Overview
The data come from the RNA Mapping Database (RMDB), library RFM100. Chemical mapping of a 177-nucleotide RNA with DMS and 2A3.
RNA sequence: GGGAACGACUCGAGUAGAGUCGAAAAUCGGCACGGAUGCUGGCAUAAUGGUUGUAAGCGGCCCGUCUUGAAACACGGACCAAGGAGUCUAACAUCCACGCGAGUGUUCGGGUGUCAAACCCGUGCGUUUUGUCGGAAGUUUCGACUUCCGACAAAAAAAAGAAACAACAACAACAAC
Reactivity to DMS in 0.01 (KOAc 150mM, MgCl2 10mM, bicine 150mM(pH8.5), 24C), signal-to-noise 2, nucleotides 027 to 126: u010c110g000g000c010a100c000g040g000a050u020g010c010u000g020g050c010a020u020a140a160u000g000g000u020u000g000u010a040a060g000c040g000g000c000c000c020g000u000c030u000u010g000a110a150a120c300a030c040g060g010a090c010c000a070a070g020g000a230g000u030c070u020a120a040c110a030u000c010c010a000c180g010c040g000a070g000u000g020u000u000c020g030g030g010u000g010u010c050a050a130a080c050c000c000g030u050g000c100g000
Reactivity to 2A3 in 0.01 (KOAc 150mM, MgCl2 10mM, bicine 150mM(pH8.5), 24C), signal-to-noise 2, nucleotides 027 to 126: u090c000g000g000c030a000c010g000g000a000u020g010c010u060g070g000c010a040u110a150a080u120g000g000u010u030g010u020a060a130g060c000g030g030c000c010c010g010u000c010u070u290g060a000a030a000c070a000c010g000g040a000c010c070a130a080g050g000a050g040u000c010u030a050a000c010a020u000c040c030a040c190g000c010g020a000g020u000g040u020u000c010g020g040g110u060g010u040c010a000a000a200c000c000c000g030u020g040c050g030

2A3 adducts were read by reverse transcription with SuperScript II with manganese. For DMS, 2,501 sequencing reads were counted.